[RMDB]
Chemical mapping of a 177-nucleotide RNA with DMS and 2A3. Conditions: 150 mM KOAc, 10 mM MgCl2 and 150 mM bicine (pH 8.5), 24 C. For DMS, 1,439 sequencing reads were counted. For 2A3, 1,091 sequencing reads were counted.
RNA sequence: GGGAACGACUCGAGUAGAGUCGAAAAUGGCAGACUCUUGCGAUUGGCUAAAGGAUGGUAAAAGGAGAGGGAAUCUAGAACUAGCGAAUAGGAUCCAAUCUGUACUGUGUAUUCUGAUAGCAGGAUAGAUGCAAAGACCAUUCGUGGUCUUUGCAUCAAAAGAAACAACAACAACAAC
Reactivity to DMS in 0.01 (KOAc 150mM, MgCl2 10mM, bicine 150mM(pH8.5), 24C), signal-to-noise 2, nucleotides 027 to 126: u020g020g020c050a080g020a110c050u000c040u000u000g020c080g010a070u010u000g010g020c100u000a090a110a130g010g000a030u000g000g020u010a050a040a100a140g020g010a150g010a120g000g000g000a100a070u000c030u000a090g000a100a080c110u000a100g000c100g020a080a070u010a050g010g040a080u000c070c040a030a100u000c030u000g000u000a060c070u020g010u000g020u000a060u000u010c160u010g010a150u000a130g000c010a030g020g010a170u000a020
Reactivity to 2A3 in 0.01 (KOAc 150mM, MgCl2 10mM, bicine 150mM(pH8.5), 24C), signal-to-noise 1, nucleotides 027 to 126: u030g080g000c000a010g010a090c040u040c000u060u030g030c020g090a100u000u140g030g030c010u060a160a070a040g110g000a040u020g040g000u090a060a080a110a000g080g020a030g000a000g030g030g000a050a080u040c030u060a060g010a110a070c040u010a050g010c000g060a060a060u030a060g000g000a030u000c050c000a000a040u000c080u070g060u070a050c020u050g050u030g010u100a070u050u080c000u040g120a110u060a040g030c000a000g040g040a020u060a070